An RNA of 177 nucleotides, treated with 2A3 and DMS and read out base by base.
RNA sequence: GGGAACGACUCGAGUAGAGUCGAAAAGAAUGAAACUCAGAAUUGAACAAUCUUUGCUGUAAGUAGCUGCUCUUGGUGAGUCUCCGAUUUUUGUUCAAGUCUGAGAAAAGCCAUGCUUACACCAGGACCACUGAUACGUUUUCGAACGUAUCAGUGGAAAAGAAACAACAACAACAAC
Reactivity to 2A3 in 0.01 (KOAc 150mM, MgCl2 10mM, bicine 150mM(pH8.5), 24C), signal-to-noise 1, nucleotides 027 to 126: g080a000a040u050g030a040a090a030c000u000c000a020g010a080a060u000u000g010a010a000c000a020a050u010c030u140u170u060g010c040u030g050u160a160a040g070u020a030g040c080u070g000c000u020c010u110u200g240g010u220g060a010g060u010c030u000c070c050g010a020u090u000u000u000u040g000u000u000c000a030a000g000u040c020u030g050a000g000a000a030a000a000g040c030c010a010u060g020c010u050u040a010c040a020c030c030a000g070g070a050
Reactivity to DMS in 0.01 (KOAc 150mM, MgCl2 10mM, bicine 150mM(pH8.5), 24C), signal-to-noise 2, nucleotides 027 to 126: g000a130a060u000g000a140a120a170c000u000c000a020g000a050a050u000u000g000a020a050c000a010a040u000c030u010u000u000g020c030u000g010u010a060a120g020u020a090g020c090u000g000c090u000c080u010u020g040g000u000g000a050g010u000c020u010c110c060g000a030u020u010u000u020u000g030u000u000c010a030a020g000u000c000u000g020a020g010a010a010a090a140g010c180c050a000u000g000c010u010u010a040c050a210c030c030a100g020g010a250

Conditions: 150 mM KOAc, 10 mM MgCl2 and 150 mM bicine (pH 8.5), 24 C. For DMS the reverse transcriptase was MarathonRT.